[RMDB]
The record gives the reactivity of an RNA of 207 nucleotides to 2A3.

RNA sequence: GGGAACGACUCGAGUAGAGUCGAAAAUCUUUACGUUCCAUUGAAGAUCUGCACUUGCUCUUCUGCUAACCGCUAAGGUGUCAUCAGUGCUGUGCUAUUAAAAUCAGAAGUCAAAGAAGGUGGGUGUGGCCCUCAUAGCCAGAGUUGAUAGAAAUGGACGGAGCAAUUUUUUCGAAAAUUGCUCCGUAAAAGAAACAACAACAACAAC
Reactivity to 2A3 in 0.01 (KOAc 150mM, MgCl2 10mM, bicine 150mM(pH8.5), 24C), signal-to-noise 1, nucleotides 027 to 156: u030c000u040u040u110a010c060g010u040u040c000c000a000u040u100g050a020a020g000a030u030c040u060g000c050a010c060u080u030g000c000u060c030u140u020c010u060g080c020u010a000a200c000c010g060c300u240a290a070g000g010u050g080u060c050a080u010c000a030g010u010g010c000u030g030u010g030c070u020a150u300u260a240a060a000a000u000c000a000g020a150a010g010u030c050a030a000a130g130a060a050g110g040u020g000g060g000u010g010u000g050g000c050c000c050u000c010a020u220a000g110c050c010a010g040a040g050u060u160g010a030u150a240g100a050a120a080u180g030g000
Source: RMDB library OK3TST, as collected in RNAgym.